RNA sequence: GGGAACGACUCGAGUAGAGUCGAAAAAUCGUUUUAUGAGUACAACCUCUUAAUUGAAAAGAAACCGAGUUUCAAAUCCUGAUGAAGACGGUUGCUUUCUCCGCCCGGAGAGCGUUUCGAUUGAACGCACACACAGGAGAUUCGUCUCCUGUGUGUGAAAAGAAACAACAACAACAAC
Reactivity to 2A3 in 0.01 (KOAc 150mM, MgCl2 10mM, bicine 150mM(pH8.5), 24C), signal-to-noise 4, nucleotides 027 to 126: a000u070c030g010u020u010u050u070a180u100g040a020g040u130a060c040a070a070c050c000u010c010u060u030a110a120u070u060g100a080a060a030a100g080a020a010a000c060c080g040a110g090u000u020u010c060a090a110a090u070c060c070u210g060a110u120g010a030a000g010a000c070g000g060u020u050g000c020u030u040u030c000u000c000c010g090c010c000c040g020g000a010g000a000g020c010g000u020u020u100c040g000a080u000u080g050a060a020c010g000
Reactivity to DMS in 0.01 (KOAc 150mM, MgCl2 10mM, bicine 150mM(pH8.5), 24C), signal-to-noise 3, nucleotides 027 to 126: a020u020c060g020u000u000u020u000a030u020g010a080g010u000a170c250a080a170c100c020u020c000u000u000a040a050u020u020g020a050a050a120a160g000a060a030a010c010c070g000a090g010u000u000u000c010a030a050a100u020c080c140u000g010a110u010g000a040a010g000a040c080g000g010u000u000g010c050u000u000u010c010u010c050c050g000c100c050c110g000g000a040g010a060g000c090g010u010u020u020c020g000a060u040u040g010a040a110c190g000